RNA sequence: GGGAACGACUCGAGUAGAGUCGAAAACUAGGGUUCGCCCUAGCCAUCAUCCUAAGUCAUUCGGAGGCUUUCGGGAGGCAUGGUCGGAAACGACCAAUGCCGAGGAUCGAAAGCUACCCACCCGAAUGAUAUGGAGCUAGAGUUGCUUCGGCAACAAAAUACGACUGUUGUUCGCAACAGUCGUAUUAAAAGAAACAACAACAACAAC
Reactivity to DMS in 0.01 (KOAc 150mM, MgCl2 10mM, bicine 150mM(pH8.5), 24C), signal-to-noise 2, nucleotides 027 to 156: c010u000a000g020g000g020u000u000c300g070c020c000c000u000a010g010c010c020a120u000c120a110u000c010c040u000a070a250g010u010c000a030u010u000c010g060g020a290g010g010c020u000u000u000c020g000g000g000a140g020g060c010a030u000g000g040u010c010g010g000a160a110a290c020g030a030c010c000a030a000u010g040c010c010g000a140g040g050a050u000c010g000a000a030a010g020c010u000a010c010c020c020a300c150c000c010g000a050a010u010g000a010u000a130u000g000g030a020g030c060u000a120g000a300g000u010u010g010c000u010u000c120g000g030c070a030a110c080a060a070
Reactivity to 2A3 in 0.01 (KOAc 150mM, MgCl2 10mM, bicine 150mM(pH8.5), 24C), signal-to-noise 2, nucleotides 027 to 156: c000u000a000g030g000g050u040u060c250g180c020c000c000u000a010g020c030c010a150u170c010a060u000c000c000u030a150a050g020u000c000a010u000u010c000g000g000a000g010g000c000u000u010u000c010g040g000g000a000g010g000c000a000u010g000g020u000c000g020g050a070a040a050c020g000a000c000c010a100a120u020g000c000c010g020a110g010g000a010u000c000g000a000a000a000g000c010u010a010c010c040c050a060c000c020c010g000a000a000u000g000a000u000a050u060g020g010a010g000c080u190a070g060a030g150u020u000g000c010u050u060c260g100g020c010a000a010c000a010a120
This 207-nucleotide RNA was probed chemically with DMS and 2A3. Conditions: 150 mM KOAc, 10 mM MgCl2 and 150 mM bicine (pH 8.5), 24 C. 2A3 adducts were read by reverse transcription with SuperScript II with manganese. Reactivities are given for positions 27 through 156. DMS adducts were read by reverse transcription with MarathonRT.